This 177-nucleotide RNA was probed chemically with DMS and 2A3. 2A3 adducts were read by reverse transcription with SuperScript II with manganese. For DMS, 2,260 sequencing reads were counted. The RNA was probed in 150 mM KOAc, 10 mM MgCl2 and 150 mM bicine (pH 8.5) at 24 C.

RNA sequence: GGGAACGACUCGAGUAGAGUCGAAAACUUAGGGAGGAUUAUUAACCUCUGGGAAUGGAAGGUGACAUGUUUUGUAAAUCAGAUUAACACUUCAACAGGUCCCUAUCAGCUGGAAACUAUAUGGCAGUCUAAUCUAAACCUUCGGGUUUAGAUUAGAAAAAGAAACAACAACAACAAC
Reactivity to DMS in 0.01 (KOAc 150mM, MgCl2 10mM, bicine 150mM(pH8.5), 24C), signal-to-noise 3, nucleotides 027 to 126: c030u000u020a130g020g000g000a040g010g000a100u000u020a120u010u000a130a120c020c010u000c030u010g030g010g020a080a090u000g000g020a110a040g010g010u000g000a060c120a050u000g010u000u000u010u010g010u010a060a120a100u010c090a090g010a200u000u010a070a090c090a050c080u000u020c070a050a060c050a060g000g010u010c000c020c000u010a060u000c060a090g020c020u000g000g000a120a050a100c080u000a090u000a070u010g010g000c080a090g000
Reactivity to 2A3 in 0.01 (KOAc 150mM, MgCl2 10mM, bicine 150mM(pH8.5), 24C), signal-to-noise 2, nucleotides 027 to 126: c040u040u080a040g040g050g000a000g040g030a040u070u110a090u130u200a300a090c030c000u000c050u050g050g000g100a050a100u140g040g080a010a030g000g070u080g040a020c030a090u020g100u020u220u120u040g090u070a140a200a130u130c030a040g010a160u060u120a190a020c060a030c100u070u110c020a020a010c000a060g040g030u000c000c000c000u040a140u040c060a030g000c000u060g070g000a190a090a010c050u050a060u010a040u300g050g000c030a010g020